[RMDB]
RNA sequence: GGGAACGACUCGAGUAGAGUCGAAAAGAGGCUUAUCCCGGGGGUGACGCCUCGGUCCUCCCUUAGCAUCGGAGACCCGGGCCCCCUCCCAGGAAAGGGAACAGGGGGAAAUCGACCGGGUCCCGCAAUAGGACCUAGUUCGCUAGGUCCAAAAGAAACAACAACAACAAC
Reactivity to 2A3 in 0.01 (KOAc 150mM, MgCl2 10mM, bicine 150mM(pH8.5), 24C), signal-to-noise 8, nucleotides 027 to 129: g020a000g020g030c040u160u160a040u130c020c010c020g110g010g020g000g000u060g030a010c070g020c000c000u010c010g000g010u040c010c020u020c010c010c010u060u140a090g040c060a090u150c020g000g010a150g010a180c000c000c000g000g000g000c020c000c000c000c000u020c000c000c000a060g100g170a190a120a070g030g010g010a070a070c080a130g010g000g000g000g010a010a020a080u140c060g080a080c000c000g000g000g000u000c000c000c000g000c000a050a140u120a110
Reactivity to DMS in 0.01 (KOAc 150mM, MgCl2 10mM, bicine 150mM(pH8.5), 24C), signal-to-noise 7, nucleotides 027 to 129: g000a010g000g000c080u040u040a100u020c000c020c050g030g020g000g020g020u030g000a130c290g000c030c010u020c070g010g020u030c010c010u000c030c000c010u000u000a100g040c130a150u060c030g040g020a100g060a010c020c030c040g000g000g000c020c000c010c010c010u000c000c020c000a090g030g060a080a130a130g010g000g020a200a070c180a100g030g010g020g030g070a030a030a030u090c110g020a130c020c000g000g000g000u000c000c010c010g060c180a060a030u030a130
Structure probing data (2A3 and DMS) for a 170-nucleotide construct. The 2A3 profile rests on 37,389 reads. Values are in units of 0.01, from 0 to 300, in steps of 10. The DMS profile rests on 29,114 reads.